[RMDB]
RNA sequence: GGGAACGACUCGAGUAGAGUCGAAAAUGCUAGGGACUGGGUAUGCUUCGUUGUCAUGCCUGGAGACACUGUUAAGAUAGGAAUCGACCUCAGCGCCAACGGGGACAGCCCUAAUGACGUAUGGAUCACGCUACUACCUAUUCGUAGGUAGUAGCGUAAAAGAAACAACAACAACAAC
Reactivity to 2A3 in 0.01 (KOAc 150mM, MgCl2 10mM, bicine 150mM(pH8.5), 24C), signal-to-noise 4, nucleotides 027 to 126: u150g030c030u030a060g030g020g040a060c000u030g050g000g030u020a040u100g040c000u080u200c070g170u160u060g080u100c020a040u090g010c000c000u020g050g000a020g010a000c050a050c020u020g040u120u180a150a110g020a100u150a050g110g050a110a070u050c100g050a100c020c010u040c000a000g020c000g000c000c000a000a050c050g000g000g000g090a090c050a100g070c000c000c000u110a180a170u090g080a030c100g030u100a090u110g040g030a100u080c040
Reactivity to DMS in 0.01 (KOAc 150mM, MgCl2 10mM, bicine 150mM(pH8.5), 24C), signal-to-noise 4, nucleotides 027 to 126: u030g030c040u010a070g000g000g010a170c010u000g000g000g010u010a020u010g000c060u040u000c280g020u010u000g000u010c010a020u010g000c040c040u000g000g000a130g000a130c050a110c050u000g020u020u010a090a100g000a080u020a030g000g020a040a170u010c060g010a110c050c010u010c040a050g000c080g050c050c030a030a070c190g000g000g000g000a110c200a090g020c000c000c000u000a060a080u010g000a090c070g010u010a080u010g000g000a090u020c100